Structure probing data (2A3 and DMS) for a 177-nucleotide construct. It was measured as part of the RMDB library OK2TRN. The RNA was probed in 150 mM KOAc, 10 mM MgCl2 and 150 mM bicine (pH 8.5) at 24 C. 2A3 adducts were read by reverse transcription with SuperScript II with manganese.
RNA sequence: GGGAACGACUCGAGUAGAGUCGAAAAAUGAAAAACCCUGGUUAAUCAAAGAUGUUCCAGAGUGCCUAGAACUGAGAGGGAAAUGGAACUCAUUUGGAACUCCCCGUGAGGAGGUCGAGGCGCACAGUCCAUCAAGUAAGUUCGCUUACUUGAUGGAAAAAGAAACAACAACAACAAC
Reactivity to 2A3 in 0.01 (KOAc 150mM, MgCl2 10mM, bicine 150mM(pH8.5), 24C), signal-to-noise 1, nucleotides 027 to 126: a000u090g030a000a020a020a020a040c010c030c020u060g260g000u110u230a130a060u170c040a070a080a000g030a080u110g020u020u000c000c000a000g000a030g070u070g080c000c000u040a110g060a140a100c110u130g050a050g040a030g290g010g020a120a060a000u030g020g000a000a020c000u030c060a120u030u090u050g000g000a010a060c010u040c000c000c000c000g110u090g040a170g030g030a020g000g000u050c040g000a030g020g000c020g000c010a010c020a070g080
Reactivity to DMS in 0.01 (KOAc 150mM, MgCl2 10mM, bicine 150mM(pH8.5), 24C), signal-to-noise 4, nucleotides 027 to 126: a070u010g000a040a130a120a100a090c040c010c020u010g030g030u000u000a090a080u010c040a060a080a070g000a110u000g010u000u000c000c010a040g010a090g030u000g010c000c010u010a090g010a190a150c110u010g000a070g000a150g000g000g010a060a070a130u010g000g010a040a020c020u020c070a110u000u000u000g000g010a050a050c050u000c010c020c010c100g000u010g010a090g000g020a050g000g010u000c040g020a070g000g020c020g000c080a060c160a090g000